[RMDB]
RNA sequence: GGGAACGACUCGAGUAGAGUCGAAAAGAAUCAGUUCGCUGAUUCAAAAGCGUACUACUGGUGCCUCCUUGAAGCUACCUCCCCACCACAAUCCCAAAUAGGAUUGUGAGGGUAGUGGAGAGGCCCAGUAUCGCAAAGCUACUGAUUCGUCAGUAGCGCUAGCGGGUUACUUCGGUAACCCGCUAGCAAAAGAAACAACAACAACAAC
Reactivity to 2A3 in 0.01 (KOAc 150mM, MgCl2 10mM, bicine 150mM(pH8.5), 24C), signal-to-noise 1, nucleotides 027 to 156: g010a000a000u000c000a000g070u120u140c110g060c170u000g010a040u030u050c050a000a060a060a030g010c020g010u040a070c010u000a000c000u030g000g110u250g070c000c030u020c020c040u100u150g080a040a020g030c010u000a000c020c000u180c040c030c030c020a020c010c000a000c000a000a000u060c000c000c000a070a300a190u190a070g000g000a000u000u010g000u000g000a010g060g020g000u000a000g010u060g050g030a080g000a000g010g040c000c000c000a000g000u000a000u000c000g000c030a180a050a020g030c000u000a000c000u000g000a030u020u130c170g080u010c070a000g000u000a000g000c020